[RMDB]
An RNA of 177 nucleotides, treated with DMS and 2A3 and read out base by base. For 2A3, 1,498 sequencing reads were counted. For 2A3 the reverse transcriptase was SuperScript II with manganese.

RNA sequence: GGGAACGACUCGAGUAGAGUCGAAAAAAAAACGAUGAUCCAGUUGAAGCGGUGAUUAUCGUAGCUAUCAGCUGGAUCAUCAAUCGGUGGCGACACCGAACGAUAACCGCAGACAUGCUGAAAAAAAGGUAUUAAAUACCUUCGGGUAUUUAAUACCAAAAGAAACAACAACAACAAC
Reactivity to DMS in 0.01 (KOAc 150mM, MgCl2 10mM, bicine 150mM(pH8.5), 24C), signal-to-noise 2, nucleotides 027 to 126: a050a090a090a080a080c180g000a010u000g000a010u000c000c000a000g040u010u000g000a070a010g030c020g000g050u010g000a220u000u000a050u010c020g020u000a130g040c010u000a080u000c000a000g040c000u000g000g000a000u000c000a000u010c000a050a050u000c020g000g000u000g010g000c300g000a250c010a010c000c000g000a020a070c170g010a120u000a090a060c050c050g030c030a040g020a080c260a080u000g020c040u000g000a000a010a080a070a020a100a080
Reactivity to 2A3 in 0.01 (KOAc 150mM, MgCl2 10mM, bicine 150mM(pH8.5), 24C), signal-to-noise 2, nucleotides 027 to 126: a000a000a000a000a000c070g000a010u030g000a000u010c000c000a000g000u010u000g000a020a010g000c030g080g060u080g170a230u010u280a090u280c050g050u040a020g020c000u140a170u300c020a000g000c000u000g010g020a000u010c000a000u000c010a000a000u000c000g000g030u000g000g030c040g010a030c020a010c000c020g000a020a000c000g000a000u090a060a040c050c000g000c020a000g030a110c070a100u110g000c010u080g140a040a010a000a000a000a050a080